Notes
Structure probing data (2A3 and DMS) for a 177-nucleotide construct. The reactions ran in a buffer of 150 mM KOAc, 10 mM MgCl2 and 150 mM bicine (pH 8.5), at 24 C.
[RMDB]
RNA sequence: GGGAACGACUCGAGUAGAGUCGAAAAAGGGACUCGUGCCACCCCUUUGCAGCAGCUCUUGGAUUCGCUGCGCAUCCAUUGGCCUGGGCAACUGGGUGGUUAUGCCGUUGGGAUUCGGCGCCACCUGCAUCAUCGGGAUCUUCGGAUCCCGAUGAUGAAAAGAAACAACAACAACAAC
Reactivity to 2A3 in 0.01 (KOAc 150mM, MgCl2 10mM, bicine 150mM(pH8.5), 24C), signal-to-noise 5, nucleotides 027 to 126: a010g030g000g040a040c060u120c240g140u160g020c000c000a030c000c000c010c000u020u020u030g080c100a160g010c010a030g000c000u040c050u200u260g190g060a230u290u130c050g000c060u040g010c000g000c010a040u020c010c000a040u080u200g030g000c000c020u050g040g010g050c040a100a080c050u040g000g000g010u020g020g000u090u080a130u280g010c010c010g030u050u090g090g020g030a080u050u040c000g000g000c000g020c000c000a010c000c010u000g010
Reactivity to DMS in 0.01 (KOAc 150mM, MgCl2 10mM, bicine 150mM(pH8.5), 24C), signal-to-noise 2, nucleotides 027 to 126: a040g020g000g020a030c050u000c200g000u020g010c000c020a240c110c010c010c030u010u000u000g010c040a090g030c000a080g020c060u020c140u030u030g030g010a110u000u060c170g030c000u000g010c000g030c060a120u000c020c030a050u030u040g000g000c060c020u000g010g010g020c130a040a110c060u010g000g000g000u000g000g060u000u050a120u050g010c000c000g010u000u050g000g020g030a300u090u050c000g000g010c000g000c010c000a030c020c020u010g010